Source: RMDB library OK3TST, as collected in RNAgym. Structure probing data (DMS and 2A3) for a 207-nucleotide construct. For DMS the reverse transcriptase was MarathonRT. For 2A3, 2,404 sequencing reads were counted.
RNA sequence: GGGAACGACUCGAGUAGAGUCGAAAAGUUGAUUUGUAAUAUGUGAAUUAUUUCCUGUCCAAACAGCAAAAGUGGUAAGGCCAUUUAGUAGAACCAUUAGAAUGGUUGGACUUUUAACCUCUAGUUAGCAGGAUAAACUACCUCUGCCAAACUUAACGUGACAUCAUUUAUUCGUAAAUGAUGUCACAAAAGAAACAACAACAACAAC
Reactivity to DMS in 0.01 (KOAc 150mM, MgCl2 10mM, bicine 150mM(pH8.5), 24C), signal-to-noise 3, nucleotides 027 to 156: g040u000u000g010a100u000u000u010g000u000a090a130u000a070u030g000u000g000a100a080u000u000a050u010u010u000c030c000u010g000u010c010c020a050a030a040c060a060g010c040a100a100a140a200g030u000g000g020u010a080a130g010g020c040c030a100u000u000u000a090g040u000a080g000a120a080c040c000a030u000u000a150g010a100a090u000g010g000u000u000g010g010a030c020u000u000u010u010a080a130c060c030u000c090u000a040g040u000u000a060g030c000a050g010g010a080u000a050a100a160c110u000a030c040c030u000c010u000g010c010c040a030a050a090c000u000u000a060a120c180
Reactivity to 2A3 in 0.01 (KOAc 150mM, MgCl2 10mM, bicine 150mM(pH8.5), 24C), signal-to-noise 5, nucleotides 027 to 156: g050u030u030g030a140u100u070u110g040u070a120a080u070a210u230g090u020g100a040a100u150u060a130u050u090u020c010c000u020g030u040c020c030a080a030a040c020a070g070c040a050a080a070a050g030u030g010g030u070a050a040g100g030c010c000a040u090u080u040a050g020u020a030g060a130a060c000c010a010u030u090a100g180a230a040u030g020g000u020u010g020g000a010c000u060u090u000u090a100a070c010c020u040c020u050a060g040u030u060a000g020c000a010g010g010a050u130a140a100a020c050u070a060c020c030u080c020u070g030c010c040a120a050a060c050u150u150a050a000c100